Source information:
Structure probing data (2A3 and DMS) for a 177-nucleotide construct.

RNA sequence: GGGAACGACUCGAGUAGAGUCGAAAACGUAGAUACUUCGGUAUCUACGAAAAUAACGCUGGCGUCGGACACAGCCGGAGCUAGCCUCGGAUAGUCUCAGUAAAACAGCAUGGUUCGCCAUGCUGAAGUCUUGAAAUACCUUCGGGUAUUUCAAGACAAAAGAAACAACAACAACAAC
Reactivity to 2A3 in 0.01 (KOAc 150mM, MgCl2 10mM, bicine 150mM(pH8.5), 24C), signal-to-noise 2, nucleotides 027 to 126: c000g000u000a010g000a000u010a000c000u020u050c280g060g000u020a020u070c000u020a000c000g000a000a000a000a030u060a040a040c020g020c020u010g010g000c020g130u070c050g010g060a090c000a020c040a300g060c000c000g010g000a010g040c000u020a000g000c020c030u050c060g090g040a080u070a100g100u010c010u000c040a110g070u210a000a160a030a040c000a010g010c000a000u000g020g020u050u050c130g040c070c000a000u010g000c000u000g020a000a000
Reactivity to DMS in 0.01 (KOAc 150mM, MgCl2 10mM, bicine 150mM(pH8.5), 24C), signal-to-noise 2, nucleotides 027 to 126: c000g020u000a000g010a010u000a000c000u000u010c240g030g010u000a030u000c000u010a000c010g000a010a070a070a050u000a120a090c240g020c040u000g010g020c040g030u000c050g000g030a130c130a140c290a220g010c010c000g020g000a020g000c020u000a050g010c010c100u010c130g020g000a110u000a090g000u000c000u000c020a070g010u000a090a060a140a150c000a000g000c000a030u000g000g010u020u040c240g020c000c010a000u000g000c000u000g000a030a070
Values are in units of 0.01, from 0 to 300, in steps of 10. For DMS, 1,232 sequencing reads were counted. 2A3 adducts were read by reverse transcription with SuperScript II with manganese. The RNA was probed in 150 mM KOAc, 10 mM MgCl2 and 150 mM bicine (pH 8.5) at 24 C. The 2A3 profile rests on 1,665 reads.